Notes:
This 177-nucleotide RNA was probed chemically with 2A3 and DMS. The 2A3 profile rests on 2,544 reads. DMS adducts were read by reverse transcription with MarathonRT. For DMS, 1,744 sequencing reads were counted. 2A3 adducts were read by reverse transcription with SuperScript II with manganese. Reactivities are given for positions 27 through 126.
RNA sequence: GGGAACGACUCGAGUAGAGUCGAAAACGCGGUCAAGGCGAUGGCGCCCGAGUGCGAGCUGGUCAUCGUGGUCGGCUCGCGCAAUUCGUCGAAUUCGGUUCGGCUGGUCGAGGUGGCGCUGGGUGCCGCCGUACUGUGCGUUCGCGCACAGUACGGCAAAAGAAACAACAACAACAAC
Reactivity to 2A3 in 0.01 (KOAc 150mM, MgCl2 10mM, bicine 150mM(pH8.5), 24C), signal-to-noise 1, nucleotides 027 to 126: c050g030c020g070g030u050c060a080a100g000g000c010g090a070u060g000g020c000g020c020c010c010g030a030g020u020g000c000g000a000g000c000u010g020g000u040c040a170u140c230g290u200g000g000u020c010g000g000c000u000c000g000c000g020c000a000a000u070u040c040g000u000c000g020a030a020u130u110c130g140g100u100u020c000g040g050c060u140g100g000u090c070g090a050g000g150u150g030g000c020g000c010u020g010g050g020u170g020c000c030
Reactivity to DMS in 0.01 (KOAc 150mM, MgCl2 10mM, bicine 150mM(pH8.5), 24C), signal-to-noise 2, nucleotides 027 to 126: c100g010c030g010g010u000c080a070a190g050g000c010g000a280u000g010g010c020g010c020c010c010g030a090g060u000g010c010g010a000g000c000u010g010g000u000c010a150u010c300g010u000g020g000u000c010g020g000c000u000c000g010c020g000c040a050a080u000u000c130g040u010c000g000a000a060u010u000c140g020g000u000u000c030g030g030c020u000g020g010u000c070g030a140g000g000u000g000g000c000g000c060u030g010g010g010u000g000c020c080